Conditions: 150 mM KOAc, 10 mM MgCl2 and 150 mM bicine (pH 8.5), 24 C. Structure probing data (DMS and 2A3) for a 177-nucleotide construct. For 2A3 the reverse transcriptase was SuperScript II with manganese.
RNA sequence: GGGAACGACUCGAGUAGAGUCGAAAAACGUGCGAAAGCACGGUCAGCUCGUGAGGAUAUACAACACUGCUUCGGCAGUGUCUUAAGAUCACAUGAGGAUCACCCAUGUAGAAGGCACGAGCUGAUACGGUAUCCUAGGUUUCGACCUAGGAUACCGAAAAGAAACAACAACAACAAC
Reactivity to DMS in 0.01 (KOAc 150mM, MgCl2 10mM, bicine 150mM(pH8.5), 24C), signal-to-noise 2, nucleotides 027 to 126: a090c000g050u000g020c010g000a160a040a160g000c000a000c000g000g040u010c010a010g000c000u000c000g020u010g010a070g000g010a150u000a080u000a070c250a140a050c000a000c000u010g000c000u000u010c190g010g000c000a000g000u000g000u000c070u010u010a060a100g000a040u000c070a060c060a020u000g010a100g000g000a130u000c240a130c040c040c020a040u000g000u000a070g000a080a300g000g010c010a000c000g000a050g020c000u000g000a000u000a040
Reactivity to 2A3 in 0.01 (KOAc 150mM, MgCl2 10mM, bicine 150mM(pH8.5), 24C), signal-to-noise 2, nucleotides 027 to 126: a000c000g000u000g010c020g050a200a020a030g000c000a010c000g010g000u000c000a000g000c010u000c000g020u030g010a050g050g070a100u020a020u010a090c030a020a010c000a020c000u020g000c000u050u070c140g140g000c000a000g000u000g000u000c000u050u060a050a020g020a030u010c000a030c020a170u130g070a240g140g000a070u090c040a190c080c020c000a010u030g010u020a030g020a100a030g080g000c000a000c000g000a020g000c010u000g000a000u010a000

Overview
As a SHAPE reagent, 2A3 marks flexible, mostly unpaired nucleotides at the ribose 2'-OH. The data come from the RNA Mapping Database (RMDB), library OK2TRN. DMS adducts were read by reverse transcription with MarathonRT.